[RMDB]
RNA sequence: GGGAACGACUCGAGUAGAGUCGAAAAAAUAUCCUAAUAAUGCAAUUGUAUGCAGGUUUGACACACGUGUGCAUUCUGAGUUCAAUUUGCCAGGUUGUGAUGGCGGUAGUUUGUAUGUUAACAAGCACCUUCUUCUAUACUUCGGUAUAGAAGAAGGAAAAGAAACAACAACAACAAC
Reactivity to DMS in 0.01 (KOAc 150mM, MgCl2 10mM, bicine 150mM(pH8.5), 24C), signal-to-noise 3, nucleotides 027 to 126: a100a090u010a070u000c010c000u000a090a050u010a100a060u000g010c030a030a060u000u000g010u000a050u000g010c050a080g010g000u000u010u010g000a140c060a030c060a080c260g010u000g000u000g030c020a040u010u000c030u010g000a130g000u000u000c070a050a070u000u010u000g000c020c100a060g020g010u000u010g020u000g010a090u000g000g010c080g000g030u010a060g010u010u000u000g000u000a050u010g010u000u000a060a070c080a040a080g010c170a180
Reactivity to 2A3 in 0.01 (KOAc 150mM, MgCl2 10mM, bicine 150mM(pH8.5), 24C), signal-to-noise 2, nucleotides 027 to 126: a000a000u170a040u030c030c000u040a070a060u090a200a050u140g040c000a010a070u040u170g030u040a000u050g030c030a010g080g020u060u080u120g040a060c040a000c010a000c110g090u090g020u050g290c030a010u040u000c010u010g080a090g010u050u060c000a030a020u060u090u010g000c000c010a020g070g120u060u070g030u060g020a110u030g040g010c020g060g060u080a050g030u050u050u060g110u040a170u110g110u070u050a080a040c040a020a000g020c000a060

The data come from the RNA Mapping Database (RMDB), library 15KREP. Chemical mapping of a 177-nucleotide RNA with DMS and 2A3. DMS adducts were read by reverse transcription with MarathonRT. Conditions: 150 mM KOAc, 10 mM MgCl2 and 150 mM bicine (pH 8.5), 24 C.